[RMDB]
RNA sequence: GGGAACGACUCGAGUAGAGUCGAAAAGAUAUGGACCUCUUUGAUGACCUAGCGUAACAUCAUUCGGAAACGAAUGUGGCUAGCAAGAAGUCGUCCUAAGUCAAACCAAGCAGUUCGCUGCUUGGAAGAGUAAUCUCCUCUUCGGAGGAGAUUACUCAAAAGAAACAACAACAACAAC
Reactivity to 2A3 in 0.01 (KOAc 150mM, MgCl2 10mM, bicine 150mM(pH8.5), 24C), signal-to-noise 2, nucleotides 027 to 126: g000a060u070a030u090g000g020a020c010c010u020c080u170u060u040g300a300u120g030a090c000c030u010a000g060c010g160u190a090a120c060a250u280c000a000u050u000c000g020g010a020a080a050c000g010a030a010u000g000u040g060g020c010u000a000g040c020a090a290g020a050a000g030u050c030g010u000c000c000u030a190a030g090u100c070a080a070a110c000c000a000a000g000c000a000g030u070u210c290g000c150u030g020c010u010u010g000g000a030a000
Reactivity to DMS in 0.01 (KOAc 150mM, MgCl2 10mM, bicine 150mM(pH8.5), 24C), signal-to-noise 2, nucleotides 027 to 126: g010a090u000a300u000g000g010a010c000c010u000c020u000u000u010g010a110u010g020a090c300c000u000a010g000c000g030u010a040a140c120a030u000c010a030u010u000c030g010g000a100a100a180c030g040a000a010u010g060u000g000g000c000u010a010g010c010a020a140g010a010a000g000u000c260g010u000c000c000u000a050a130g000u030c040a160a100a250c010c010a000a000g020c010a020g030u000u020c240g000c000u010g020c000u000u000g000g000a030a040
The data come from the RNA Mapping Database (RMDB), library TTRDEL.
An RNA of 177 nucleotides, treated with 2A3 and DMS and read out base by base.
For 2A3, 1,800 sequencing reads were counted.
DMS (dimethyl sulfate) methylates the pairing face of unpaired adenines and cytosines.
DMS adducts were read by reverse transcription with MarathonRT.
The reactions ran in a buffer of 150 mM KOAc, 10 mM MgCl2 and 150 mM bicine (pH 8.5), at 24 C.